[RMDB]
RNA sequence: GGGAACGACUCGAGUAGAGUCGAAAAUACUAUGCAGCCAUAAAAAAGGAUGAGUUCAUGUCCUUUGCAGGGACAUGGAUGACGUUGGAAACCAUCAUUCUCAGCAAACUAACACAAGAACAGAAAUCCAAACACCGCCAUGUUCUCACUCAUAAGACUGAUAAUAUCCCUUCGGGGAUAUUAUCAGAAAAGAAACAACAACAACAAC
Reactivity to DMS in 0.01 (KOAc 150mM, MgCl2 10mM, bicine 150mM(pH8.5), 24C), signal-to-noise 1, nucleotides 027 to 156: u010a050c020u000a070u000g000c050a070g000c040c040a100u000a000a050a000a120a050a050g040g020a070u000g020a220g030u000u000c010a010u000g000u010c020c010u000u000u000g010c130a290g000g040g000a020c010a020u010g010g020a060u010g000a050c100g020u030u020g000g020a150a090a030c060c000a070u010c010a070u000u010c010u000c010a110g000c060a080a080a090c090u000a020a120c080a090c020a030a090g020a090a090c030a050g020a050a050a050u020c040c020a090a050a080c040a040c050c030g030c020c010a080u000g000u000u000c000u010c020a050c070u000c030a070u000a130a180g000a170
Reactivity to 2A3 in 0.01 (KOAc 150mM, MgCl2 10mM, bicine 150mM(pH8.5), 24C), signal-to-noise 3, nucleotides 027 to 156: u030a010c060u060a030u140g050c020a040g030c010c030a070u170a070a150a000a010a000a030g040g010a060u050g030a040g070u040u050c010a010u020g000u000c030c010u130u050u150g050c170a080g000g000g000a000c000a000u000g000g000a010u040g000a010c030g060u070u060g030g000a060a060a030c040c000a010u050c000a030u090u010c050u030c040a030g000c030a030a050a080c050u100a090a010c040a010c040a120a030g040a040a010c030a020g070a110a080a020u010c020c020a000a110a000c040a050c040c000g060c010c000a010u020g020u050u060c010u010c030a030c010u120c020a060u120a150a050g080a070
An RNA of 207 nucleotides, treated with DMS and 2A3 and read out base by base.
It was measured as part of the RMDB library OK3TST.
For 2A3, 1,654 sequencing reads were counted.
2A3 adducts were read by reverse transcription with SuperScript II with manganese.